[RMDB]
RNA sequence: GGGAACGACUCGAGUAGAGUCGAAAAACGCCAGUGAGUACGCUCACUGGCGAAUGCCAAUGCCUAUCACAUAUCUGCCUGUCCUAUGACAAACAUGGCAGGUAGAUAUUUGAUAGGCAUUGGCAAAACACUGCUAUGGGUUCGCCCAUAGCAGUGUAAAAGAAACAACAACAACAAC
Reactivity to 2A3 in 0.01 (KOAc 150mM, MgCl2 10mM, bicine 150mM(pH8.5), 24C), signal-to-noise 2, nucleotides 027 to 126: a000c000g000c000c000a000g010u000g020a000g050u010a060c230g030c120u000c000a000c010u000g000g000c000g000a020a000u030g000c000c000a000a000u000g000c000c000u000a010u000c000a000c000a000u000a000u000c010u010g000c000c000u060g010u150c030c030u160a040u050g080a140c160a100a120a040c000a060u090g020g000c000a000g000g000u000a000g000a000u000a000u010u010u000g000a000u000a000g000g000c000a010u010u000g010g000c000a000a010a000
Reactivity to DMS in 0.01 (KOAc 150mM, MgCl2 10mM, bicine 150mM(pH8.5), 24C), signal-to-noise 1, nucleotides 027 to 126: a030c000g030c000c020a000g030u000g050a020g070u050a030c270g020c010u030c020a000c000u020g010g000c020g030a000a000u010g000c040c000a000a000u000g000c000c000u020a000u000c000a000c110a000u000a000u000c010u000g010c000c000u000g000u020c000c120u050a000u000g030a240c300a070a130a120c010a030u000g000g000c000a000g000g000u000a030g000a000u000a020u000u000u000g000a000u010a010g000g000c000a000u000u000g010g010c000a000a000a060